This 177-nucleotide RNA was probed chemically with DMS and 2A3. The reactions ran in a buffer of 150 mM KOAc, 10 mM MgCl2 and 150 mM bicine (pH 8.5), at 24 C. It was measured as part of the RMDB library TTRDEL. DMS adducts were read by reverse transcription with MarathonRT. In probing experiments dimethyl sulfate is read out at A N1 and C N3, which are open when not base-paired.
RNA sequence: GGGAACGACUCGAGUAGAGUCGAAAAGAUAUGGAACUGACCCAGCGAAACUACGCGUUGAAAUCGGAAACGAUGGAGCGUACCGAGUAGCUGCAGUUCCUAAGUCAAAGCAUGCUUCGGCAUGCAAGACGCCAAUAGAGUUCGCUCUAUUGGCGUCAAAAGAAACAACAACAACAAC
Reactivity to DMS in 0.01 (KOAc 150mM, MgCl2 10mM, bicine 150mM(pH8.5), 24C), signal-to-noise 3, nucleotides 027 to 126: g000a080u000a300u010g020g000a010a000c010u000g000a260c250c300c110a000g000c030g010a140a190a130c060u000a000c000g000c000g000u010u010g000a070a190a030u010c010g020g000a150a100a210c000g000a020u000g010g010a080g050c000g010u000a010c260c030g010a070g000u000a130g000c010u000g010c000a020g010u000u000c000c000u000a010a080g000u000c010a110a100a070g000c000a010u000g000c000u000u010c200g040g020c000a000u000g040c000a020a030
Reactivity to 2A3 in 0.01 (KOAc 150mM, MgCl2 10mM, bicine 150mM(pH8.5), 24C), signal-to-noise 2, nucleotides 027 to 126: g010a030u070a010u120g000g010a000a000c030u020g160a140c090c090c050a010g020c010g010a030a040a040c110u070a020c030g000c010g150u240u080g080a100a110a020u010c000g010g040a050a040a040c020g010a010u030g020g050a030g000c000g020u010a030c070c130g040a040g030u030a010g000c000u010g000c000a010g000u000u020c010c000u000a060a000g000u000c030a110a070a000g010c000a000u010g000c010u060u110c280g170g000c000a000u010g000c010a010a000